[RMDB]
RNA sequence: GGGAACGACUCGAGUAGAGUCGAAAACGUUGAUGUCCCCCGGUGGGACGACUUCAUUUCUGGAUGUGCUGAGAGGUGGUGCAGGAGGGCUUCUUGAUGGCAGCCUCGGUCCAAACAAUGGCUACUAAGACAGAGUUGAUUUCGAUCAACUCUGUCUAAAAGAAACAACAACAACAAC
Reactivity to DMS in 0.01 (KOAc 150mM, MgCl2 10mM, bicine 150mM(pH8.5), 24C), signal-to-noise 1, nucleotides 027 to 126: c260g010u000u010g010a080u000g020u000c020c000c000c070c260g000g010u000g020g000g020a040c020g010a060c020u010u000c050a090u010u000u010c080u000g000g000a120u010g020u000g020c040u030g000a100g000a060g040g030u000g010g000u000g020c050a060g000g010a140g000g020g000c060u010u000c040u000u000g010a060u000g010g030c040a070g000c020c000u000c090g000g030u000c070c070a120a050a090c160a060a030u040g000g000c020u000a100c080u000a090